RNA sequence: GGGAACGACUCGAGUAGAGUCGAAAAGAUCAUGGACCAAGGUGAAAAUGAGUUCCUAGCAAACCACAAGAAAUUGUGCAUGUCUAAGCUAGGCUCUUGGUGUCAAAUGGUUUCACUGAUUGGUGCGAUCUAUCAAGGUUUUCGAACCUUGAUAGAUAAAAGAAACAACAACAACAAC
Reactivity to 2A3 in 0.01 (KOAc 150mM, MgCl2 10mM, bicine 150mM(pH8.5), 24C), signal-to-noise 6, nucleotides 027 to 126: g030a030u040c020a020u070g020g020a000c000c010a010a040g150g030u070g040a020a040a050a090u090g010a020g050u130u130c000c000u010a000g000c010a030a070a010c020c000a010c010a000a020g050a050a070a030u030u000g010u030g040c090a100u090g050u070c120u130a080a000g000c000u000a010g000g010c000u000c000u010u050g060g010u070g060u050c000a030a090a090u070g050g010u000u080u120c040a040c080u050g060a140u050u070g070g060u120g090c040g010
Reactivity to DMS in 0.01 (KOAc 150mM, MgCl2 10mM, bicine 150mM(pH8.5), 24C), signal-to-noise 9, nucleotides 027 to 126: g010a040u000c020a060u000g000g000a030c010c010a030a090g010g030u010g000a030a040a070a050u000g000a030g010u010u000c010c000u000a010g020c010a100a140a110c180c010a010c000a010a010g000a100a090a160u000u000g000u000g000c150a160u010g010u010c140u010a100a120g010c000u000a010g000g000c040u000c000u000u000g010g010u000g020u010c050a030a090a090u000g000g010u000u000u000c010a020c160u010g000a060u000u000g010g020u010g020c160g000